[RMDB]
This 207-nucleotide RNA was probed chemically with 2A3 and DMS. For DMS the reverse transcriptase was MarathonRT. Conditions: 150 mM KOAc, 10 mM MgCl2 and 150 mM bicine (pH 8.5), 24 C.
RNA sequence: GGGAACGACUCGAGUAGAGUCGAAAAAUGGUAGUUAGUCUACUCGCUAUCCUAGUUACUUUGGAGUAAUCUAAAGUGUGUGUAAACGGGCGAAAGUCUGUAAAAUACUGGGGACAGAGGGUCAACAAGAACUAGUAGACCUUCGGGUCUACUAGAACUUCAGAUUCUGAUUCGUCAGAAUCUGAAGAAAAGAAACAACAACAACAAC
Reactivity to 2A3 in 0.01 (KOAc 150mM, MgCl2 10mM, bicine 150mM(pH8.5), 24C), signal-to-noise 4, nucleotides 027 to 156: a000u110g010g010u040a070g020u090u060a040g060u050c020u060a090c020u070c010g030c020u060a060u160c010c000u040a050g020u020u040a010c020u030u010u020g010g020a010g040u110a130a110u000c010u030a020a020a000g010u020g010u010g000u000g020u110a080a130a050c040g010g010g000c020g040a060a020a020g010u010c020u020g050u030a030a080a000a020u090a070c030u020g000g000g020g010a010c020a010g030a020g060g010g000u040c010a000a020c020a060a080g060a080a030c000u000a000g010u000a000g000a000c010c000u040u020c130g080g000g000u000c000u000a000c000u000a000g000a000a000
Reactivity to DMS in 0.01 (KOAc 150mM, MgCl2 10mM, bicine 150mM(pH8.5), 24C), signal-to-noise 2, nucleotides 027 to 156: a120u000g000g020u000a060g010u000u000a170g010u000c000u000a040c020u010c050g020c060u000a070u010c010c010u010a100g000u000u000a030c010u000u000u000g020g020a060g030u010a170a190u000c020u010a040a020a020g040u010g000u000g010u000g030u000a100a140a040c050g020g010g000c030g020a100a120a200g010u000c020u000g020u000a030a080a070a040u000a020c000u000g020g040g030g000a070c020a020g000a030g000g000g020u000c020a060a070c040a080a100g020a140a150c000u000a030g020u000a040g020a030c000c010u000u020c300g040g020g020u000c000u030a000c010u000a000g000a040a120